Chemical mapping of a 177-nucleotide RNA with DMS and 2A3. Values cover nucleotides 27 to 126. For 2A3 the reverse transcriptase was SuperScript II with manganese. Conditions: 150 mM KOAc, 10 mM MgCl2 and 150 mM bicine (pH 8.5), 24 C. For 2A3, 31,142 sequencing reads were counted. DMS adducts were read by reverse transcription with MarathonRT.
[RMDB]
RNA sequence: GGGAACGACUCGAGUAGAGUCGAAAAGAUAUGGAUAAUCAUAGGGAGAAGGACAUCGGAAACGAUGUCCCUUCAUCGAUCUAUAUUAUCCUAAGUCAAACGACUCUUAGGUUCGCCUAAGAGUCGAGAGAACUAUACUGUUCGCAGUAUAGUUCUCAAAAGAAACAACAACAACAAC
Reactivity to DMS in 0.01 (KOAc 150mM, MgCl2 10mM, bicine 150mM(pH8.5), 24C), signal-to-noise 6, nucleotides 027 to 126: g000a010u000a070u010g000g000a010u000a000a010u010c250a030u010a010g010g010g000a100g010a050a020g010g010a030c000a010u000c000g010g010a020a020a070c000g020a010u000g000u000c170c160c040u000u000c010a280u010c270g000a070u000c010u000a020u010a040u000u000a010u000c000c000u000a010a140g000u000c010a090a130a280c020g010a020c000u000c000u000u000a000g000g010u000u020c290g010c000c000u000a000a010g010a020g010u000c000g010a030
Reactivity to 2A3 in 0.01 (KOAc 150mM, MgCl2 10mM, bicine 150mM(pH8.5), 24C), signal-to-noise 6, nucleotides 027 to 126: g000a000u010a000u070g000g010a000u010a010a010u090c170a040u170a080g050g050g010a270g020a040a010g010g000a000c010a010u000c000g010g000a020a010a010c000g000a000u010g000u010c070c020c000u020u000c020a070u270c110g060a040u000c010u000a040u000a010u120u000a000u000c010c000u000a030a000g000u010c040a180a060a090c030g000a000c000u000c000u000u010a010g000g080u090u080c300g100c100c000u000a000a000g000a000g000u000c000g000a010